[RMDB]
This 207-nucleotide RNA was probed chemically with 2A3 and DMS. 2A3 adducts were read by reverse transcription with SuperScript II with manganese. The reactions ran in a buffer of 150 mM KOAc, 10 mM MgCl2 and 150 mM bicine (pH 8.5), at 24 C. Source: RMDB library OK3TST, as collected in RNAgym. For DMS the reverse transcriptase was MarathonRT. The DMS profile rests on 10,492 reads.
RNA sequence: GGGAACGACUCGAGUAGAGUCGAAAAGCUAGUCGGAGACGACUAGCAACGAUCAGUUCGCUGAUCGGAACGUGCAUUCGAAUACGCUAGAAGCACGAAUAGGCGACGCAUAGCGUAACACAGAGGAAGCUCAUGACAUGAAUAACAAGGCGUCGCGGAUUUUACGAUAGUUCGCUAUCGUAAAAUCAAAAGAAACAACAACAACAAC
Reactivity to 2A3 in 0.01 (KOAc 150mM, MgCl2 10mM, bicine 150mM(pH8.5), 24C), signal-to-noise 9, nucleotides 027 to 156: g000c000u000a000g000u000c000g040g000a050g010a090c000g000a000c000u000a000g000c000a000a010c000g000a000u000c000a000g060u070u110c140g020c110u000g000a000u000c000g010g040a050a020c010g000u010g000c060a300u000u020c000g010a060a040u020a030c010g000c010u000a000g000a020a000g000c010a000c010g000a040a090u210a130g060g000c000g010a000c000g000c010a060u100a050g000c000g010u010a080a040c080a000c030a070g050a020g070g050a100a060g060c020u020c050a070u090g040a060c040a130u160g110a160a070u180a130a040c080a100a040g070g000c000g000u000c000g000c000g000
Reactivity to DMS in 0.01 (KOAc 150mM, MgCl2 10mM, bicine 150mM(pH8.5), 24C), signal-to-noise 4, nucleotides 027 to 156: g000c010u000a000g030u000c010g030g040a300g010a300c010g010a020c000u000a010g020c000a030a010c030g010a000u010c020a020g020u000u010c300g070c020u000g010a020u000c000g000g010a050a050c020g040u000g030c020a240u000u010c000g010a140a090u000a030c000g020c020u010a140g000a060a110g000c010a030c010g020a100a120u010a110g040g010c010g020a040c030g050c010a190u000a070g000c010g010u000a020a180c050a110c040a110g020a090g020g020a080a100g010c050u000c060a110u000g010a130c110a120u000g020a100a080u010a080a100c090a050a090g010g010c000g010u000c010g010c020g010